[RMDB]
RNA sequence: GGGAACGACUCGAGUAGAGUCGAAAACGAACGCCGAUCAGCUGUACAAGCAGGUCACGGGCGGUUGAGGGCGGCGGCCAUGACGAAUCUCUGGGAUAGGGCGUUCGACCUGACGGGGCGCGUCGCACGUAUCCCACGAGUUCGCUCGUGGGAUACGAAAAGAAACAACAACAACAAC
Reactivity to 2A3 in 0.01 (KOAc 150mM, MgCl2 10mM, bicine 150mM(pH8.5), 24C), signal-to-noise 3, nucleotides 027 to 126: c020g020a040a000c020g010c020c050g030a090u070c040a030g020c000u040g060u180a100c060a190a020g020c010a030g000g050u060c040a030c100g060g030g000c030g000g040u060u150g060a100g020g110g030c020g010g010c000g030g000c010c010a050u140g040a030c040g050a080a110u050c050u020c030u130g050g000g060a100u130a090g120g000g000c000g000u010u010c010g020a040c020c010u000g030a050c070g040g010g030g000c080g010c020g050u030c020g010c000a040
Reactivity to DMS in 0.01 (KOAc 150mM, MgCl2 10mM, bicine 150mM(pH8.5), 24C), signal-to-noise 5, nucleotides 027 to 126: c030g000a040a050c010g000c010c030g010a060u010c030a080g010c010u000g010u000a110c280a130a080g010c020a080g000g000u010c020a170c130g000g000g010c060g010g000u000u000g010a130g000g000g000c000g000g000c030g010g000c020c030a060u020g010a090c070g010a080a030u010c050u000c050u000g010g010g020a090u010a060g010g010g010c040g010u010u000c020g000a090c050c020u000g010a110c130g010g010g010g010c100g000c030g020u000c020g010c060a130